[RMDB]
RNA sequence: GGGAACGACUCGAGUAGAGUCGAAAAGAUAUGGAUGCAUUAAGACAUGCUGAAGUACUCGGAAACGAGUACAUGCAGCAACAGCUUACUGUGCAUCCUAAGUCAAACGCUACGUUCGCGUAGCGAAGUAGUCUCGAUGGUUCGCCAUCGAGACUACAAAAGAAACAACAACAACAAC
Reactivity to DMS in 0.01 (KOAc 150mM, MgCl2 10mM, bicine 150mM(pH8.5), 24C), signal-to-noise 2, nucleotides 027 to 126: g010a000u010a180u040g010g000a000u000g000c000a000u000u000a000a020g010a040c020a300u030g100c000u010g000a000a030g020u010a040c000u000c020g040g000a040a050a050c010g030a000g000u000a010c000a000u010g000c000a000g000c000a110a060c300a080g000c000u000u030a000c300u010g040u000g060c020a030u000c000c000u000a020a060g000u010c010a140a130a220c030g030c020u000a000c010g030u000u020c260g040c010g000u000a000g030c000g010a040a070
Reactivity to 2A3 in 0.01 (KOAc 150mM, MgCl2 10mM, bicine 150mM(pH8.5), 24C), signal-to-noise 2, nucleotides 027 to 126: g010a000u020a020u010g000g000a000u020g060c010a020u060u070a020a010g060a020c180a220u300g000c000u000g020a020a010g000u000a010c010u010c030g000g000a000a020a010c000g010a000g040u000a010c000a000u300g000c000a000g000c040a090a080c080a040g000c010u000u000a020c060u090g000u040g000c000a000u030c000c000u010a010a000g010u000c030a170a060a060c050g020c010u000a000c000g050u080u090c300g000c020g180u010a000g000c010g030a090a010
An RNA of 177 nucleotides, treated with DMS and 2A3 and read out base by base. For DMS the reverse transcriptase was MarathonRT. 2A3 adducts were read by reverse transcription with SuperScript II with manganese. For DMS, 1,255 sequencing reads were counted. The 2A3 profile rests on 3,228 reads.